[RMDB]
RNA sequence: GGGAACGACUCGAGUAGAGUCGAAAAGCAUGCCUUUAAUUACAGACACUGCAAUAUCUAAACCGACUAGGUCGGAUAGGGCAUAUGUACCUGUUUUAGGACGACCAAUCGCUUGCCCAGUUAAAGCCAUUAGGGGGUCCUUCGGGACCCCCUAAUGAAAAGAAACAACAACAACAAC
Reactivity to DMS in 0.01 (KOAc 150mM, MgCl2 10mM, bicine 150mM(pH8.5), 24C), signal-to-noise 2, nucleotides 027 to 126: g050c040a050u010g030c000c010u010u010u030a070a110u000u010a090c050a040g020a090c070a020c190u000g030c020a020a050u000a010u020c020u030a070a090a050c000c010g060a300c070u050a130g050g000u010c060g000g000a050u000a070g000g000g050c040a000u000a110u000g010u020a050c050c050u000g000u000u000u010u000a000g000g000a090c060g000a140c120c030a010a040u030c070g020c040u000u000g000c040c010c000a180g000u020u010a060a200a210g040c110
Reactivity to 2A3 in 0.01 (KOAc 150mM, MgCl2 10mM, bicine 150mM(pH8.5), 24C), signal-to-noise 1, nucleotides 027 to 126: g020c000a000u150g000c010c000u090u300u230a120a020u110u030a010c010a020g040a020c030a000c050u080g000c070a000a260u000a010u080c010u020a010a000a300c000c010g190a220c050u170a080g300g000u000c040g000g010a000u000a000g100g000g000c000a010u000a110u220g030u000a090c010c000u020g000u210u000u000u070a000g000g000a020c040g010a010c040c010a000a040u050c000g010c120u010u010g000c010c000c000a010g000u010u080a100a030a000g090c010